[RMDB]
Annotation:
Chemical mapping of a 177-nucleotide RNA with 2A3 and DMS. The 2A3 profile rests on 45,969 reads. For DMS, 30,729 sequencing reads were counted. Conditions: 150 mM KOAc, 10 mM MgCl2 and 150 mM bicine (pH 8.5), 24 C.

RNA sequence: GGGAACGACUCGAGUAGAGUCGAAAACAGAAAGGCAGUUGGUGUAGAGGCGUACAUCAGUGAUGAAAGCACCAGCAGCGAGAGGGGACUGCACUUCAGCGAUGUUCAGUCGCGCCACUGGAGUCAACUACUCCAAUUAUUUCGAUAAUUGGAGUAGAAAAGAAACAACAACAACAAC
Reactivity to 2A3 in 0.01 (KOAc 150mM, MgCl2 10mM, bicine 150mM(pH8.5), 24C), signal-to-noise 9, nucleotides 027 to 126: c020a010g120a070a090a010g110g010c020a020g010u060u040g030g010u030g010u060a070g020a050g100g040c040g030u030a020c010a050u060c040a050g120u060g180a080u060g040a060a060a020g020c020a020c020c010a010g020c010a010g020c020g040a090g020a030g060g030g010g010a020c030u030g020c050a020c040u050u050c040a020g040c010g050a020u040g120u130u100c020a020g010u030c020g000c010g010c040c000a020c020u020g020g010a020g040u030c010a020a040
Reactivity to DMS in 0.01 (KOAc 150mM, MgCl2 10mM, bicine 150mM(pH8.5), 24C), signal-to-noise 9, nucleotides 027 to 126: c080a110g010a060a080a090g010g010c030a050g020u000u000g010g020u000g020u000a070g010a120g020g010c060g010u010a120c060a050u010c050a080g010u010g010a080u000g010a090a110a150g000c040a050c030c030a040g010c050a070g010c050g000a090g010a090g010g000g010g010a110c080u000g000c070a060c050u000u000c060a090g010c070g010a030u010g010u000u000c110a090g000u000c070g010c040g000c030c030a130c050u000g000g000a060g010u000c080a090a200